Conditions: 150 mM KOAc, 10 mM MgCl2 and 150 mM bicine (pH 8.5), 24 C. Structure probing data (2A3 and DMS) for a 177-nucleotide construct. The DMS profile rests on 3,732 reads. It was measured as part of the RMDB library OK1LIB. High 2A3 reactivity points to a flexible backbone, as in loops and unpaired stretches.

RNA sequence: GGGAACGACUCGAGUAGAGUCGAAAAGAAGAGAAUAAGCGCGGAUAUCUCUGUCGGUAGAGCCGCAGGACCGACACCUGCGAGUAUAGGGAUCAAGACCCUGUUCGCGCAAAGAUUGAAGUAGAAGCGUCCAUUAUGAGUUCGCUCAUAAUGGACGAAAAGAAACAACAACAACAAC
Reactivity to 2A3 in 0.01 (KOAc 150mM, MgCl2 10mM, bicine 150mM(pH8.5), 24C), signal-to-noise 4, nucleotides 027 to 126: g080a040a010g060a000g010a010a120u200a150a060g010c000g000c000g010g000a010u010a060u070c010u000c010u010g210u160c100g100g080u180a030g030a010g040c000c000g000c000a000g020g000a200c060c110g050a010c020a040c000c000u000g000c030g010a020g000u050a020u100a100g060g030g020a040u120c080a080a080g060a150c000c000c000u010g000u000u010c000g010c010g000c000a000a020a000g060a040u040u140g020a090a050g080u150a030g030a110a020g030
Reactivity to DMS in 0.01 (KOAc 150mM, MgCl2 10mM, bicine 150mM(pH8.5), 24C), signal-to-noise 3, nucleotides 027 to 126: g000a130a090g040a120g030a080a100u020a070a120g010c050g020c000g000g040a010u000a050u000c010u030c020u000g000u000c080g000g010u010a030g010a040g010c130c010g020c070a040g000g000a090c100c040g020a030c060a060c050c000u000g040c040g040a110g020u010a120u020a010g000g000g010a120u020c230a130a240g000a070c010c010c000u000g010u010u010c000g000c020g000c020a080a030a020g020a110u010u010g000a030a130g010u010a040g000a140a100g000